Chemical mapping of a 177-nucleotide RNA with 2A3 and DMS. High DMS reactivity at an A or C suggests that its Watson-Crick edge is free. The reactions ran in a buffer of 150 mM KOAc, 10 mM MgCl2 and 150 mM bicine (pH 8.5), at 24 C. DMS adducts were read by reverse transcription with MarathonRT. For 2A3 the reverse transcriptase was SuperScript II with manganese. The DMS profile rests on 1,410 reads.
RNA sequence: GGGAACGACUCGAGUAGAGUCGAAAAUGAACACUUUCAUGGAUUUUGUAACAGAAUCCCUAGAUCAGCACUGUCCAGUAACUCUGCAGGGAUGGGAGUGUCCGGUACAGGGGCCACGAGCCACAUACCACCACCUUAGAUUCGUCUAAGGUGGUGGAAAAGAAACAACAACAACAAC
Reactivity to 2A3 in 0.01 (KOAc 150mM, MgCl2 10mM, bicine 150mM(pH8.5), 24C), signal-to-noise 2, nucleotides 027 to 126: u100g030a110a010c040a010c050u070u130u110c070a100u090g000g090a050u070u030u030u130g030u090a170a040c030a090g020a000a000u000c020c000c020u060a090g010a190u120c030a000g030c010a000c040u040g020u000c050c000a020g010u040a080a070c040u010c020u110g050c050a040g000g000g080a010u030g000g040g020a020g020u040g010u020c030c010g060g010u050a020c010a060g080g050g000g000c000c040a060c090g030a000g010c020c030a050c020a040u090a050
Reactivity to DMS in 0.01 (KOAc 150mM, MgCl2 10mM, bicine 150mM(pH8.5), 24C), signal-to-noise 2, nucleotides 027 to 126: u010g030a050a040c040a100c050u000u010u000c010a040u000g000g000a090u000u010u000u000g020u010a150a110c150a100g000a040a000u020c010c000c060u020a100g020a110u000c030a050g030c030a070c030u000g000u000c070c040a120g010u000a120a100c100u010c050u000g010c050a050g010g000g010a060u040g000g000g010a070g020u000g020u000c020c080g030g000u000a060c140a060g000g010g010g010c020c030a040c130g000a090g010c000c040a070c130a110u000a110